An RNA of 177 nucleotides, treated with DMS and read out base by base. Conditions: 150 mM KOAc, 10 mM MgCl2 and 150 mM bicine (pH 8.5), 24 C. Reactivities are given for positions 27 through 126.
[RMDB]
RNA sequence: GGGAACGACUCGAGUAGAGUCGAAAAAUAUUCAGGAUCUUUCAGGCAAAGGUUUUCGUAUAACAAUGAUAAACCAUGCUCCUGAAUAUAAAGAUCUAAUUUCUCGCGGAAAUCGCAGUCUGCAGAAUCCUGAUUUUACUUUCGAGUAAAAUCAGGAAAAAGAAACAACAACAACAAC
Reactivity to DMS in 0.01 (KOAc 150mM, MgCl2 10mM, bicine 150mM(pH8.5), 24C), signal-to-noise 2, nucleotides 027 to 126: a000u010a040u010u010c130a160g000g000a080u000c010u020u000u000c060a100g000g000c110a060a100a130g000g010u010u000u000u030c000g000u000a060u010a140a130c200a160a030u000g000a010u010a000a000a020c020c040a210u010g010c110u010c000c000u000g010a050a050u020a010u010a080a050a040g000a060u010c000u010a080a130u010u000u000c010u010c060g040c020g020g000a040a030a040u020c180g010c160a090g000u000c030u010g010c060a070g000a070a090